[RMDB]
RNA sequence: GGGAACGACUCGAGUAGAGUCGAAAAGCUACCGUUGACACCCUUCUCCCAGGGGAAAACCUCCACCGACGCGGACGUGGACGAGGCGCUGCGGCUGAUGCGGAUGAGCAAGGUGUCGCUGCUGGAGGACACGCAGGAAAUUCGUUUCCUGCGUGUCAAAAGAAACAACAACAACAAC
Reactivity to DMS in 0.01 (KOAc 150mM, MgCl2 10mM, bicine 150mM(pH8.5), 24C), signal-to-noise 2, nucleotides 027 to 126: g000c100u010a080c090c050g020u010u000g000a100c140a180c010c010c030u000u010c130u010c000c070c010a150g000g000g000g000a020a020a150a130c090c010u000c030c010a100c060c020g010a100c070g020c080g020g000a080c080g050u000g030g030a040c070g010a130g020g000c080g000c010u000g000c040g000g000c030u000g030a130u010g040c010g000g000a190u020g000a110g000c100a070a080g010g020u000g020u010c020g050c080u030g000c050u000g010g000a140g010
Reactivity to 2A3 in 0.01 (KOAc 150mM, MgCl2 10mM, bicine 150mM(pH8.5), 24C), signal-to-noise 1, nucleotides 027 to 126: g070c020u070a080c040c030g060u050u140g010a030c030a080c020c010c000u060u000c030u010c050c010c030a010g020g010g010g000a000a100a010a050c000c010u010c000c010a050c020c050g110a110c010g000c030g080g000a060c010g030u050g090g000a050c050g070a090g110g060c170g000c050u020g010c010g000g040c070u070g000a130u080g010c030g000g100a120u060g020a080g020c040a030a010g040g000u080g000u040c020g000c060u060g000c030u060g000g100a040g010
About this RNA: Chemical mapping of a 177-nucleotide RNA with DMS and 2A3. DMS adducts were read by reverse transcription with MarathonRT. 2A3 adducts were read by reverse transcription with SuperScript II with manganese.